[RMDB]
RNA sequence: GGGAACGACUCGAGUAGAGUCGAAAAGAUAUGGAAAUCUCAGCGUGAGACUGCUUAGCAAGCUUACCUCUCGGAAACGAGAGGAAGUGAUGACCUAAGCAGUCUCACGCUGAGGAUUUCCUAAGUCCUGUAACUGCAUGUUCGCAUGCAGUUACAGAAAAGAAACAACAACAACAAC
Reactivity to DMS in 0.01 (KOAc 150mM, MgCl2 10mM, bicine 150mM(pH8.5), 24C), signal-to-noise 1, nucleotides 027 to 126: g030a070u000a300u010g040g000a000a020a000u000c000u000c020a010g020c000g000u000g000a010g000a000c000u010g000c000u000u000a000g010c050a080a210g010c000u000u000a170c000c000u000c000u000c000g000g010a200a090a250c000g000a030g000a020g010g000a000a000g010u000g000a060u000g030a130c300c000u000a000a000g000c010a010g010u000c000u020c000a020c000g020c020u010g000a020g000g030a010u000u000u000c000c000u000a080a130g020u000c050